[RMDB]
RNA sequence: GGGAACGACUCGAGUAGAGUCGAAAAUGUUCUGCGCGAAGAAGGACCAAGCGAUCGACUACAAGGACACCGCGCUGUUGCGCACCUACAUCAGCGAGCGCGGCAAGAUCCGCGCGCGUCGGGUCACCGGCUAGGUUAUUUUCGAAUAACCUAGCCGAAAAGAAACAACAACAACAAC
Reactivity to DMS in 0.01 (KOAc 150mM, MgCl2 10mM, bicine 150mM(pH8.5), 24C), signal-to-noise 3, nucleotides 027 to 126: u060g000u000u000c010u000g000c040g020c060g010a100a140g000a140a100g010g010a040c030c030a090a060g020c000g000a030u030c030g020a080c040u010a090c180a100a090g000g030a080c090a180c040c040g000c000g070c030u000g010u020u000g030c160g000c110a050c080c070u000a050c150a060u040c170a130g030c000g000a090g000c000g000c000g000g000c110a030a070g010a050u030c010c010g030c050g020c020g020c060g010u000c000g010g010g000u020c000a090c130
Reactivity to 2A3 in 0.01 (KOAc 150mM, MgCl2 10mM, bicine 150mM(pH8.5), 24C), signal-to-noise 5, nucleotides 027 to 126: u130g000u050u000c010u060g030c010g000c040g060a050a140g050a070a040g160g030a030c020c010a060a050g050c030g120a080u040c030g050a060c030u120a040c060a110a090g050g000a030c030a020c080c010g000c010g000c020u050g110u170u130g010c070g000c000a080c020c030u090a090c050a120u180c040a040g020c000g030a000g020c000g010c000g000g000c000a040a030g030a070u020c000c000g000c000g000c010g000c000g000u070c000g040g010g000u050c030a040c070

An RNA of 177 nucleotides, treated with DMS and 2A3 and read out base by base. Source: RMDB library OK1LIB, as collected in RNAgym.